[RMDB]
RNA sequence: GGGAACGACUCGAGUAGAGUCGAAAAACACGCUGUGCUUGAAAUACCUGAUGGUAGAGACUUCAAAGAGGAAAGAAUUAAAACAAGAUUUGGUGCUAUGAUUAGUGAGUUAGAAUAUGGUCGAAUGAGUUUAGAUAAUGAAUUUACUCAUGAUGUCAUAGUUGCUAAGAUUCGUCUUAGCAACUAUAAAAGAAACAACAACAACAAC
Reactivity to 2A3 in 0.01 (KOAc 150mM, MgCl2 10mM, bicine 150mM(pH8.5), 24C), signal-to-noise 7, nucleotides 027 to 156: a000c030a000c030g050c050u050g020u050g030c020u060u060g060a090a100a040u100a070c010c020u060g040a070u100g030g020u040a020g010a020g010a080c020u070u040c130a080a110a020g040a030g060g010a070a040a020g030a030a070u120u150a080a080a050a050c030a040a030g030a100u050u060u090g020g010u010g000c010u040a030u090g030a070u070u050a040g020u010g040a020g020u040u050a030g030a070a040u120a060u110g060g000u040c040g030a050a030u030g000a010g010u020u080u040a030g020a070u090a100a080u150g080a030a090u060u070u040a010c000u010c000a010u060g040a040u080g060u050c020
Reactivity to DMS in 0.01 (KOAc 150mM, MgCl2 10mM, bicine 150mM(pH8.5), 24C), signal-to-noise 4, nucleotides 027 to 156: a060c020a070c110g010c020u000g030u000g000c030u000u010g000a090a100a120u000a070c040c020u010g010a120u000g030g030u010a080g010a180g020a100c040u000u000c060a060a080a150g010a110g020g010a110a060a090g010a120a130u010u010a050a060a070a080c060a060a100g010a140u000u000u000g000g030u000g010c010u000a080u000g000a100u000u000a110g030u000g020a100g020u000u000a090g010a070a090u000a070u000g020g000u000c060g010a110a050u010g010a050g020u000u000u000a050g000a100u000a060a130u010g030a050a270u000u000u000a030c020u000c000a040u000g000a110u010g010u010c070